[RMDB]
RNA sequence: GGGAACGACUCGAGUAGAGUCGAAAACGGGGGUCAGGGGUCAGGAACCCACUUGAGGAGGCAGUCUGCCGGUUCUCAGAUCUCCAGCUGCGUGCUGGGAGAGCCACUGCUCUCUUCAAAGCUGUCAGACAGGGACAUUUAAGUCUGCAGAGGUUACCUUUUAGAAAUGGUUCGCCAUUUCUAAAAGAAAAGAAACAACAACAACAAC
Reactivity to 2A3 in 0.01 (KOAc 150mM, MgCl2 10mM, bicine 150mM(pH8.5), 24C), signal-to-noise 1, nucleotides 027 to 156: c040g000g020g000g000g000u030c050a030g000g010g000g010u030c050a010g000g060a020a050c020c020c000a060c020u040u080g000a000g030g000a000g010g040c010a000g010u080c120u210g190c220c060g060g000u050u020c020u010c000a130g010a300u110c050u000c010c000a000g000c000u110g110c100g220u300g000c010u030g020g030g000a020g000a000g030c000c030a050c000u010g010c050u060c000u000c000u140u040c020a010a010a000g000c020u070g070u190c090a010g010a020c000a030g090g070g000a040c010a050u230u290u100a070a060g000u010c020u050g010c000a010g030a030g090g010u030u080a040c010
Reactivity to DMS in 0.01 (KOAc 150mM, MgCl2 10mM, bicine 150mM(pH8.5), 24C), signal-to-noise 1, nucleotides 027 to 156: c060g000g010g100g080g040u000c050a070g030g020g030g010u010c030a070g010g020a120a200c040c020c010a120c140u000u010g010a000g020g010a030g010g050c000a070g000u020c100u000g060c130c110g070g080u010u000c040u000c020a230g010a110u010c040u000c090c000a030g000c000u000g050c300g020u020g010c010u050g060g030g010a030g000a040g020c010c090a090c040u000g000c010u010c000u000c000u010u000c010a000a020a120g000c030u000g000u010c000a030g020a180c040a180g000g080g030a140c030a100u010u000u000a080a130g000u010c000u020g000c030a040g010a120g000g000u000u000a120c140
This 207-nucleotide RNA was probed chemically with 2A3 and DMS.
Reactivities are rounded to 0.1 and cut off at 0 and 3.
DMS adducts were read by reverse transcription with MarathonRT.
For 2A3 the reverse transcriptase was SuperScript II with manganese.
The reactions ran in a buffer of 150 mM KOAc, 10 mM MgCl2 and 150 mM bicine (pH 8.5), at 24 C.
The DMS profile rests on 1,973 reads.
Reactivities are given for positions 27 through 156.
It was measured as part of the RMDB library OK3TST.
For 2A3, 524 sequencing reads were counted.